Source: RMDB library OK1LIB, as collected in RNAgym. Chemical mapping of a 177-nucleotide RNA with 2A3 and DMS. The RNA was probed in 150 mM KOAc, 10 mM MgCl2 and 150 mM bicine (pH 8.5) at 24 C. Values cover nucleotides 27 to 126.
[RMDB]
RNA sequence: GGGAACGACUCGAGUAGAGUCGAAAACGAGAUUCUGGCGCGAGACUGGUAGGUCCCGGGUUCGAAUCUCGCGAGUGCGGGAUCGUGGAUGCGCGUUGCUCAGGAGUCCCAUAAUAGGACGAAACAGCAGGAUAUGCGUGUUCGCACGCAUAUCCUGAAAAGAAACAACAACAACAAC
Reactivity to 2A3 in 0.01 (KOAc 150mM, MgCl2 10mM, bicine 150mM(pH8.5), 24C), signal-to-noise 2, nucleotides 027 to 126: c000g000a010g000a080u010u030c000u080g050g040c040g000c000g150a020g040a030c010u070g160g170u300a230g040g040u000c010c000c000g040g050g000u030u040c040g030a050a070u040c000u010c040g000c000g010a110g020u150g040c020g000g040g040a000u130c030g070u090g070g010a140u060g090c040g000c020g010u060u040g020c030u030c060a020g020g050a070g020u010c070c000c010a000u090a020a060u090a090g100g000a000c020g010a020a290a000c050a000g000
Reactivity to DMS in 0.01 (KOAc 150mM, MgCl2 10mM, bicine 150mM(pH8.5), 24C), signal-to-noise 2, nucleotides 027 to 126: c040g010a030g010a050u010u040c030u010g000g010c050g060c000g010a080g010a060c020u000g020g040u030a120g030g000u000c020c000c000g020g010g040u000u000c120g010a030a030u000c030u030c080g010c000g000a050g030u000g000c080g020g000g030a050u020c040g010u000g030g000a060u000g010c060g060c040g000u010u000g000c010u000c030a070g000g020a230g010u000c000c000c080a080u060a070a090u080a050g010g010a040c070g000a200a090a110c160a070g000